The data come from the RNA Mapping Database (RMDB), library OK1LIB.
This 177-nucleotide RNA was probed chemically with 2A3 and DMS.
For DMS, 18,115 sequencing reads were counted.
Reactivities are given for positions 27 through 126.
As a SHAPE reagent, 2A3 marks flexible, mostly unpaired nucleotides at the ribose 2'-OH.
DMS adducts were read by reverse transcription with MarathonRT.
RNA sequence: GGGAACGACUCGAGUAGAGUCGAAAAUGUAUUUGGGGGUGCGUGGGGAAACUUGGAGAAAUGUGGAUUUGUUAUUAAACUAUUUUUUUAAUAACCUCUAAAACUCCCGAAACCUUAUUGGGCGGAACGAUCGUAUGGAGUUCGCUCUGUAUGGUCGAAAAGAAACAACAACAACAAC
Reactivity to 2A3 in 0.01 (KOAc 150mM, MgCl2 10mM, bicine 150mM(pH8.5), 24C), signal-to-noise 2, nucleotides 027 to 126: u070g010u030a110u050u030u020g000g000g000g000g000u040g010c020g010u050g000g000g000g000a070a010a000c010u000u040g000g000a010g000a010a090a060u100g000u050g020g050a030u010u040u090g010u020u030a060u010u040a030a010a000c000u000a090u080u060u000u010u000u000u000a000a000u000a000a000c000c010u000c000u020a020a020a000a030c000u010c000c000c000g000a020a010a000c010c000u020u060a060u030u140g010g000g010c000g010g000a040a020
Reactivity to DMS in 0.01 (KOAc 150mM, MgCl2 10mM, bicine 150mM(pH8.5), 24C), signal-to-noise 5, nucleotides 027 to 126: u040g010u030a070u010u010u010g010g000g000g000g010u010g000c080g030u010g010g000g000g000a020a030a060c190u020u000g000g000a020g010a030a030a060u000g010u020g000g010a120u010u020u020g000u020u020a060u010u010a030a030a060c070u020a000u000u000u000u000u000u000u000a000a000u000a010a050c000c160u010c010u000a090a060a090a060c030u000c000c000c050g010a030a060a070c030c030u000u020a100u020u010g000g010g000c030g010g010a060a100